[RMDB]
RNA sequence: GGGAACGACUCGAGUAGAGUCGAAAAGAUAUGGAAAUACGCACACUGAACAUAUAUCGGAAACGAUAUAUGAAGUGUGAACUACGGUUUCCUAAGUCAAACAGGAUGAGGUUCGCCUCAUCCUGAACGUGUACUUAACGUUCGCGUUAAGUACACGAAAAGAAACAACAACAACAAC
Reactivity to DMS in 0.01 (KOAc 150mM, MgCl2 10mM, bicine 150mM(pH8.5), 24C), signal-to-noise 4, nucleotides 027 to 126: g020a020u000a300u010g000g010a000a010a000u000a100c020g030c020a020c000a010c010u000g010a160a090c000a040u010a000u000a000u010c000g000g000a130a090a210c000g010a000u000a000u000a000u010g020a020a020g010u000g010u000g010a040a120c220u000a300c030g010g010u000u000u000c000c020u000a060a150g020u000c040a140a090a300c010a000g010g010a010u010g000a010g010g010u000u000c300g020c000c000u000c000a000u000c000c000u000g000a010a040
Reactivity to 2A3 in 0.01 (KOAc 150mM, MgCl2 10mM, bicine 150mM(pH8.5), 24C), signal-to-noise 2, nucleotides 027 to 126: g020a030u070a060u120g000g050a000a000a010u120a190c020g000c010a000c000a010c010u090g130a300a020c030a020u010a000u000a000u000c000g000g010a050a080a020c020g000a000u000a000u000a010u010g010a020a000g010u000g000u000g000a010a010c060u100a050c040g010g000u000u000u020c000c000u030a150a050g090u040c060a040a060a100c010a020g010g000a000u000g000a010g020g070u090u170c280g120c060c000u010c000a000u020c000c010u000g000a010a010